[RMDB]
RNA sequence: GGGAACGACUCGAGUAGAGUCGAAAAUGUGGUGGUGGGCGCCUGUAAUCCCAGCUGCUUGGAAGGCUGAGGUGGGAGAAUCUCUCAAACCCAGGAGGUGGAGGUUGCAGUGAGCCACCAAGAUCAGACGAUUACACUCCAGCCUGGGUGACAGAGAGGUGAUCACAAAAUUCGUUUUGUGAUCACCAAAAGAAACAACAACAACAAC
Reactivity to 2A3 in 0.01 (KOAc 150mM, MgCl2 10mM, bicine 150mM(pH8.5), 24C), signal-to-noise 1, nucleotides 027 to 156: u180g000u060g000g010u020g010g040u060g030g030g020c000g020c090c120u120g010u050a080a070u000c030c000c000a010g000c020u120g040c030u120u040g030g020a080a060g010g020c030u050g080a060g050g040u000g000g030g010a050g030a060a070u000c000u000c010u000c050a160a050a000c000c000c000a060g010g040a080g040g030u110g000g050a000g020g000u110u130g000c010a010g020u000g230a000g010c030c020a050c000c010a010a010g040a060u090c120a040g120a110c100g000a090u070u210a090c090a010c090u020c030c010a000g020c030c010u000g020g000g000u070g010a020c060a000g020a030g010a010
An RNA of 207 nucleotides, treated with 2A3 and read out base by base. Reactivities are given for positions 27 through 156. The RNA was probed in 150 mM KOAc, 10 mM MgCl2 and 150 mM bicine (pH 8.5) at 24 C.